Chemical mapping of a 177-nucleotide RNA with DMS and 2A3. The reactions ran in a buffer of 150 mM KOAc, 10 mM MgCl2 and 150 mM bicine (pH 8.5), at 24 C. It was measured as part of the RMDB library TTRDEL. For 2A3, 13,297 sequencing reads were counted.
[RMDB]
RNA sequence: GGGAACGACUCGAGUAGAGUCGAAAAGAUAUGGACUGAGCUAGCUCGAUUGGGUCGGAAACGACCUAGAGAGCUUGGACCUCAGGUCCUAAGUCAAAAGUAGGUAUUUGUUCGCAAAUACCUACAAGAUACAAGACUACUUCGGUAGUCUUGUAUCAAAAGAAACAACAACAACAAC
Reactivity to DMS in 0.01 (KOAc 150mM, MgCl2 10mM, bicine 150mM(pH8.5), 24C), signal-to-noise 9, nucleotides 027 to 126: g000a030u010a300u000g000g000a160c000u000g000a010g010c030u000a020g000c000u000c000g000a300u000u010g010g000g010u000c000g010g000a080a080a220c010g010a010c000c000u000a000g000a300g000a010g010c000u000u000g020g000a090c300c010u000c010a020g010g000u000c000c000u010a030a140g010u000c040a080a090a080a140g010u010a000g000g000u000a010u000u000u000g000u010u010c250g020c010a010a010a010u000a010c000c000u000a000c000a040a060
Reactivity to 2A3 in 0.01 (KOAc 150mM, MgCl2 10mM, bicine 150mM(pH8.5), 24C), signal-to-noise 4, nucleotides 027 to 126: g050a000u080a040u160g010g000a000c020u010g000a000g040c020u020a000g000c000u020c020g110a180u080u300g010g000g020u000c020g010g000a060a050a010c010g000a000c000c030u020a010g010a000g000a010g000c000u010u040g010g050a040c020c010u010c010a010g050g110u030c000c000u030a140a020g080u040c030a030a020a070a130g000u000a000g000g000u000a010u010u000u020g030u020u040c170g010c160a000a000a000u000a000c000c000u000a000c000a000a000